This 177-nucleotide RNA was probed chemically with 2A3 and DMS. It was measured as part of the RMDB library OK1LIB. For 2A3 the reverse transcriptase was SuperScript II with manganese. The RNA was probed in 150 mM KOAc, 10 mM MgCl2 and 150 mM bicine (pH 8.5) at 24 C.
RNA sequence: GGGAACGACUCGAGUAGAGUCGAAAAAGAAUACUUUUAGUACAAGCGAGUACACGCAGUAUACUGCCACGUGUGUGAGAAUACUUUUAGUACAAGCGAGUACACGCAGUAUAGUGCCACUUGUGUGGGUUUGGGAAUUGUUCGCAAUUCCCAAACCAAAAGAAACAACAACAACAAC
Reactivity to 2A3 in 0.01 (KOAc 150mM, MgCl2 10mM, bicine 150mM(pH8.5), 24C), signal-to-noise 2, nucleotides 027 to 126: a000g120a010a070u250a090c100u200u180u110u100a100g000u030a000c050a050a040g000c020g010a000g060u180a000c030a020c110g000c010a000g090u010a030u000a030c030u030g000c020c090a100c160g060u000g020u020g000u040g080a060g020a020a040u030a090c120u070u130u190u110a060g060u070a030c000a040a000g060c000g020a000g010u050a000c000a000c020g050c000a000g000u010a000u010a080g170u000g050c000c000a010c000u010u050g070u030g060u120g070
Reactivity to DMS in 0.01 (KOAc 150mM, MgCl2 10mM, bicine 150mM(pH8.5), 24C), signal-to-noise 2, nucleotides 027 to 126: a150g000a170a130u000a000c040u010u070u080u000a120g050u010a060c050a090a240g000c000g000a280g030u060a050c000a070c300g000c270a010g000u000a000u020a040c030u000g040c180c300a110c190g000u080g000u050g040u010g000a260g030a000a130u020a020c000u000u050u080u070a010g000u000a000c300a060a170g010c040g000a300g000u000a000c030a070c000g020c090a000g000u000a000u000a010g020u000g000c000c110a030c020u040u000g040u000g000u000g130